This 177-nucleotide RNA was probed chemically with DMS and 2A3. The 2A3 profile rests on 4,621 reads. For DMS the reverse transcriptase was MarathonRT. The reactions ran in a buffer of 150 mM KOAc, 10 mM MgCl2 and 150 mM bicine (pH 8.5), at 24 C.

RNA sequence: GGGAACGACUCGAGUAGAGUCGAAAAGGCCGCUGAAAAGUGGUGUGGCACUGCUCCGGCGAGGACGUGGGCGGACCGGCGGGAUGGGCUCCAGUCACCGGCUCGGUGGGCGACCGUCCCUUCCCAUCCAUAUUUAGAUGUUCGCAUCUAAAUAUGGAAAAGAAACAACAACAACAAC
Reactivity to DMS in 0.01 (KOAc 150mM, MgCl2 10mM, bicine 150mM(pH8.5), 24C), signal-to-noise 3, nucleotides 027 to 126: g010g000c000c020g020c000u010g000a090a080a120a030g020u000g000g020u000g030u000g010g010c040a070c020u010g020c050u000c020c020g010g020c080g010a120g020g010a060c070g030u010g000g020g010c020g020g000a150c030c030g010g000c120g000g000g020a050u010g020g010g010c070u000c030c050a180g000u000c040a040c020c010g020g020c110u010c040g020g020u000g000g020g010c080g020a050c020c020g010u000c000c000c020u000u000c000c000c000a150u000
Reactivity to 2A3 in 0.01 (KOAc 150mM, MgCl2 10mM, bicine 150mM(pH8.5), 24C), signal-to-noise 3, nucleotides 027 to 126: g060g000c000c010g000c050u050g060a070a090a060a030g040u040g050g060u100g070u120g150g010c060a020c160u050g000c020u000c020c010g090g030c120g120a110g080g040a050c070g040u180g020g050g030c040g040g000a150c020c010g000g040c050g000g000g000a010u020g010g040g010c040u000c050c020a020g060u040c010a010c050c030g230g050c140u100c140g010g020u070g010g010g050c010g030a020c010c010g040u030c000c000c010u000u000c000c000c010a000u000